This 207-nucleotide RNA was probed chemically with DMS and 2A3. Reactivities are given for positions 27 through 156. Source: RMDB library ARCHII, as collected in RNAgym.
RNA sequence: GGGAACGACUCGAGUAGAGUCGAAAAUGCGUUUACCUGUCAAACUCGGGGAAGCCAUUAGCGCGGUAAUCCCGAACCAAGCUCUCGCAAGAGAGAAGGUGUAGAGACUGGAAGGCAGGCAUCCUAACGUUAAGCCGAGGAUGAAGGGACAGUCCAGCGAUUAUGCUAGGUUCGCCUAGCAUAAUCGAAAAGAAACAACAACAACAAC
Reactivity to DMS in 0.01 (KOAc 150mM, MgCl2 10mM, bicine 150mM(pH8.5), 24C), signal-to-noise 2, nucleotides 027 to 156: u000g040c000g000u000u000u010a030c030c030u010g000u000c000a070a020a080c070u000c060g020g120g030g030a130a300g040c000c030a190u000u000a110g010c090g050c080g020g010u010a090a140u020c050c000c000g000a060a040c020c040a030a080g000c000u000c010u000c010g030c270a120a230g000a020g000a050g020a040a080g010g030u000g060u000a180g000a090g020a050c000u000g010g010a080a110g020g000c040a060g000g020c020a030u000c040c020u010a020a130c010g020u000u020a070a240g010c060c000g040a090g020g000a060u000g000a080a060g000g000g020a040c040a090g000u000c010c020a170g030
Reactivity to 2A3 in 0.01 (KOAc 150mM, MgCl2 10mM, bicine 150mM(pH8.5), 24C), signal-to-noise 2, nucleotides 027 to 156: u080g020c030g020u020u020u050a060c000c000u020g000u000c010a060a020a030c020u010c040g000g000g010g040a050a060g010c010c000a050u140u190a120g030c100g000c020g070g030u090a050a090u080c000c000c000g000a010a000c010c020a130a070g030c010u000c000u000c020g040c100a120a030g000a000g010a010g010a030a020g000g000u020g000u040a080g090a010g000a030c010u010g020g030a030a020g020g010c000a000g000g000c000a000u000c000c000u000a000a000c000g010u020u130a030a000g140c200c000g010a000g010g000a000u000g000a030a140g050g020g030a010c010a000g000u000c010c010a030g040